An RNA of 207 nucleotides, treated with DMS and 2A3 and read out base by base.
[RMDB]
RNA sequence: GGGAACGACUCGAGUAGAGUCGAAAACGCUGGGCAGCUCUGUAGGCCUUGCUCAGAGACCUGAAGCGCGCACGGGUCUCCCAUGGGCUACAGGCUGCCUGUGCUGAAGCGCGCACGGCAACCGAAAGGUGCGAAAAGGAAGGCGUUCGCGCCUUCCGGUCUUGUAGAAGUUCGCUUCUACAAGACCAAAAGAAACAACAACAACAAC
Reactivity to DMS in 0.01 (KOAc 150mM, MgCl2 10mM, bicine 150mM(pH8.5), 24C), signal-to-noise 1, nucleotides 027 to 156: c010g010c020u000g010g040g000c000a040g000c020u010c000u000g000u000a080g030g020c000c000u000u000g020c120u070c110a040g000a050g000a060c000c000u000g000a060a040g030c040g040c060g150c030a300c040g010g000g020u000c010u010c020c020c040a120u000g040g010g010c000u010a040c000a050g020g000c020u000g020c010c000u000g040u020g040c020u010g020a060a060g000c010g040c070g030c020a300c000g040g000c000a090a050c030c000g030a070a120a150g040g020u010g000c050g010a050a040a110a140g000g060a060a020g020g000c000g010u010u000c230g030c030g000c000c010u000u000c010c010
Reactivity to 2A3 in 0.01 (KOAc 150mM, MgCl2 10mM, bicine 150mM(pH8.5), 24C), signal-to-noise 5, nucleotides 027 to 156: c040g010c020u040g000g020g000c000a000g000c020u040c040u300g030u040a090g130g150c000c030u050u180g030c090u130c140a020g000a000g000a000c000c010u030g080a220a060g040c040g010c010g000c040a020c020g010g000g010u000c000u020c000c020c020a220u220g030g000g020c000u000a000c000a000g000g000c000u000g000c000c000u010g000u020g000c020u060g010a100a060g000c010g000c000g000c020a000c000g010g000c020a060a060c020c000g050a130a050a020g020g000u030g020c030g020a100a090a000a040g000g000a000a000g000g000c020g020u050u110c250g010c010g000c070c000u000u000c000c000
The reactions ran in a buffer of 150 mM KOAc, 10 mM MgCl2 and 150 mM bicine (pH 8.5), at 24 C.